An RNA of 177 nucleotides, treated with 2A3 and DMS and read out base by base. 2A3 adducts were read by reverse transcription with SuperScript II with manganese. Conditions: 150 mM KOAc, 10 mM MgCl2 and 150 mM bicine (pH 8.5), 24 C. Source: RMDB library TTRDES, as collected in RNAgym.
[RMDB]
RNA sequence: GGGAACGACUCGAGUAGAGUCGAAAAGAUAUGGAUCCGCCAGGGAGAACCCAUUCGGAAACGAAUGAACGUUCGAGGAUCUGGUCGGAUCCUAAGUCAAACACCUCCCCGUUCGCGGGGAGGUGAACAUUUAGCUUACGUUCGCGUAAGCUAAAUGAAAAGAAACAACAACAACAAC
Reactivity to 2A3 in 0.01 (KOAc 150mM, MgCl2 10mM, bicine 150mM(pH8.5), 24C), signal-to-noise 3, nucleotides 027 to 126: g000a000u010a020u070g000g000a010u000c000c000g010c010c000a020g020g000g000a030g000a000a000c000c030c010a010u000u000c010g010g020a010a010a010c000g000a000a010u020g020a300a080c170g000u020u010c040g030a260g000g050a000u000c000u000g010g030u260c050g000g000a000u010c000c000u000a000a000g000u010c010a000a070a030c010a010c000c000u000c000c010c010c000g030u060u080c300g000c030g160g000g000g020a000g010g000u010g000a000a000
Reactivity to DMS in 0.01 (KOAc 150mM, MgCl2 10mM, bicine 150mM(pH8.5), 24C), signal-to-noise 5, nucleotides 027 to 126: g000a030u000a020u010g000g000a010u000c000c000g010c020c010a030g000g010g000a010g020a010a010c010c190c000a010u000u000c010g020g000a010a010a020c000g010a020a010u010g000a050a120c300g010u000u000c000g010a110g030g010a010u010c000u000g010g010u020c050g020g000a010u000c000c000u000a000a060g000u010c010a140a140a300c020a000c000c000u000c000c000c000c000g020u000u010c230g030c020g030g000g010g000a000g000g010u000g000a020a110